Annotation
This 177-nucleotide RNA was probed chemically with 2A3 and DMS.
RNA sequence: GGGAACGACUCGAGUAGAGUCGAAAACGAUCUGGAUCGCGCUCACGUACUGCUCGAUCAUGACGUGCGCUGCGCAGGCCGAUCGGCCUACGAUAGCGGCCGCGCGAUAUCUCAGCGCUGGUACGUGUGAAUCUCCCGAUUUCGAUCGGGAGAUUCAAAAAGAAACAACAACAACAAC
Reactivity to 2A3 in 0.01 (KOAc 150mM, MgCl2 10mM, bicine 150mM(pH8.5), 24C), signal-to-noise 2, nucleotides 027 to 126: c030g000a060u010c080u210g090g010a040u040c010g010c000g000c000u010c020a030c040g020u030a080c020u070g070c010u040c140g160a300u100c050a060u070g060a030c000g030u050g000c030g000c020u080g010c010g000c070a070g200g000c010c000g030a050u020c050g000g000c030c020u090a120c110g250a200u150a110g070c020g050g000c020c010g040c010g010c000g000a050u050a190u120c110u040c090a050g000c020g050c110u120g030g010u070a130c000g000u020g050
Reactivity to DMS in 0.01 (KOAc 150mM, MgCl2 10mM, bicine 150mM(pH8.5), 24C), signal-to-noise 2, nucleotides 027 to 126: c030g000a020u000c050u040g030g020a060u000c070g010c110g000c000u000c030a020c010g010u000a040c040u000g040c040u000c120g020a060u000c080a090u000g000a030c020g020u000g000c110g040c010u010g050c030g000c230a070g010g030c010c010g030a090u010c040g000g030c030c050u000a060c140g010a070u010a080g000c000g000g020c040c050g010c020g020c040g040a110u000a060u030c110u000c070a140g020c070g010c040u040g080g010u000a020c010g020u010g010
Source: RMDB library OK2TRN, as collected in RNAgym. For 2A3 the reverse transcriptase was SuperScript II with manganese. DMS adducts were read by reverse transcription with MarathonRT.